Source information: An RNA of 177 nucleotides, treated with DMS and 2A3 and read out base by base. The RNA was probed in 150 mM KOAc, 10 mM MgCl2 and 150 mM bicine (pH 8.5) at 24 C. High 2A3 reactivity points to a flexible backbone, as in loops and unpaired stretches.
[RMDB]
RNA sequence: GGGAACGACUCGAGUAGAGUCGAAAAUCGGUUCUUCUUCGAUCCGGACCGGCUCAUCUCGGCAAGAGGCGGCAGUCCUCAGUACUCUUACUCUUUCCUAUAAAGAGGAGACUGCUGGACUCGCCGCGCGUAAUUGGUAGUUCGCUACCAAUUACGCAAAAGAAACAACAACAACAAC
Reactivity to DMS in 0.01 (KOAc 150mM, MgCl2 10mM, bicine 150mM(pH8.5), 24C), signal-to-noise 1, nucleotides 027 to 126: u000c010g040g010u000u000c010u000u000c150u040u030c260g000a020u010c070c030g020g010a070c090c010g000g000c010u010c060a220u000c020u000c040g020g000c220a120a190g000a120g020g010c000g010g020c030a060g050u000c000c030u000c000a040g000u060a060c040u010c000u030u030a300c030u000c000u000u000u000c260c190u000a080u020a070a010a010g000a030g000g010a060g000a030c000u000g020c170u000g000g010a020c000u000c180g000c010c020g010c030
Reactivity to 2A3 in 0.01 (KOAc 150mM, MgCl2 10mM, bicine 150mM(pH8.5), 24C), signal-to-noise 2, nucleotides 027 to 126: u070c010g000g030u000u000c000u150u020c020u150u180c110g030a030u010c030c010g000g030a010c040c000g000g000c010u000c000a090u020c020u010c000g000g020c050a070a040g000a060g190g000c000g000g000c000a000g000u000c000c000u020c010a020g020u120a300c000u020c010u080u120a180c000u000c000u000u100u040c050c070u130a130u230a280a030a010g010a000g000g000a000g000a000c000u030g060c060u010g000g000a000c000u010c050g000c010c010g000c000